[RMDB]
RNA sequence: GGGAACGACUCGAGUAGAGUCGAAAACGGAGCUGGCGCAGAUGCUGCCCGACUACGUGGAAAACUGUGUGAUCGGCGACAUUCUGCUGAAUGGCAAAUACACGAUCAAUCAGCUGCUCAACUCCACAGCCCCUCCUCAGUUCGCUGAGGAGGGGCUAAAAGAAACAACAACAACAAC
Reactivity to 2A3 in 0.01 (KOAc 150mM, MgCl2 10mM, bicine 150mM(pH8.5), 24C), signal-to-noise 2, nucleotides 027 to 126: c080g000g000a000g030c040u030g030g000c000g020c030a010g000a080u120g000c010u080g070c130c060c000g120a140c000u070a000c040g060u140g120g020a070a080a170a160c000u000g000u010g010u070g150a170u000c030g000g000c000g010a010c050a010u120u110c010u050g100c000u040g000a030a130u060g020g070c000a040a040a040u280a040c210a000c130g030a040u060c000a010a060u000c000a000g000c000u030g000c030u010c070a000a040c060u000c010c010a080c000